[RMDB]
RNA sequence: GGGAACGACUCGAGUAGAGUCGAAAAAAUACAUCAUCUCAGCACGCACGCAUUUCGAUAUGACGCGCGAUGAGGCCGAAAACCUGUCCAUGACAGAGUUUCAGAUGAUGAUUAAAAAUAAAUAUCCAGAGCCGAAAGGGUUAACGAAAGAAGAGCGCACAACAUAACCGUUCGCGGUUAUGUUGUGAAAAGAAACAACAACAACAAC
Reactivity to 2A3 in 0.01 (KOAc 150mM, MgCl2 10mM, bicine 150mM(pH8.5), 24C), signal-to-noise 1, nucleotides 027 to 156: a000a000u210a020c040a010u040c000a030u000c030u010c000a000g040c090a010c120g000c000a000c020g010c000a010u000u190u200c120g180a140u090a090u270g130a170c000g010c000g020c020g000a030u040g020a020g160g010c130c000g010a020a020a000a000c010c000u000g000u000c060c110a070u190g030a020c010a000g110a020g030u010u030u010c000a000g000a070u000g000a010u070g000a020u070u110a000a030a030a000a000u230a000a090a000u110a020u000c050c050a050g000a030g020c020c020g090a110a020a000g060g000g000u100u110a080a030c030g010a110a040a060g060a090a000g000a000g000c010g050
The record gives the reactivity of an RNA of 207 nucleotides to 2A3. 2A3 is a SHAPE reagent: it acylates the 2'-hydroxyl of flexible nucleotides of all four kinds. For 2A3, 419 sequencing reads were counted. The RNA was probed in 150 mM KOAc, 10 mM MgCl2 and 150 mM bicine (pH 8.5) at 24 C. It was measured as part of the RMDB library OK3TST.